[RMDB]
RNA sequence: GGGAACGACUCGAGUAGAGUCGAAAAAGGCGUUUUGGCUACCGUCGCAUCUGGCAGUUGCUGCGCCGUGAAGGGCUACAUGUUAAUCAUAAGCGCGUGUACAGGCUUUAUCACCUCAGUGGCCUGGCCACGGUGACCACUUCGGUGGUCACCGUGGAAAAGAAACAACAACAACAAC
Reactivity to 2A3 in 0.01 (KOAc 150mM, MgCl2 10mM, bicine 150mM(pH8.5), 24C), signal-to-noise 1, nucleotides 027 to 126: a000g060g020c070g000u090u070u130u110g050g050c050u020a030c030c010g090u000c000g040c090a300u200c180u180g020g000c000a040g000u040u040g000c000u060g000c000g020c000c000g000u030g020a080a110g000g030g020c030u030a020c050a080u110g030u090u170a190a100u150c020a050u050a130a060g060c110g010c000g160u030g030u000a010c040a060g000g080c020u050u100u070a160u020c100a070c030c000u060c020a010g050u030g020g000c000c000u000g010g020
Reactivity to DMS in 0.01 (KOAc 150mM, MgCl2 10mM, bicine 150mM(pH8.5), 24C), signal-to-noise 1, nucleotides 027 to 126: a110g010g020c020g040u000u000u000u010g000g020c020u000a050c030c030g020u000c050g010c210a130u000c070u000g020g030c000a020g020u000u000g010c020u000g020c020g040c030c000g020u050g020a050a060g010g010g010c000u000a050c100a070u000g020u000u000a090a160u010c160a020u010a060a120g030c070g040c090g000u000g010u000a060c080a040g000g000c020u000u000u000a130u000c100a100c060c030u000c090a070g040u000g010g010c010c020u000g020g000

About this RNA:
Source: RMDB library OK2TRN, as collected in RNAgym. Chemical mapping of a 177-nucleotide RNA with 2A3 and DMS. The RNA was probed in 150 mM KOAc, 10 mM MgCl2 and 150 mM bicine (pH 8.5) at 24 C. For 2A3 the reverse transcriptase was SuperScript II with manganese. Reactivities are given for positions 27 through 126.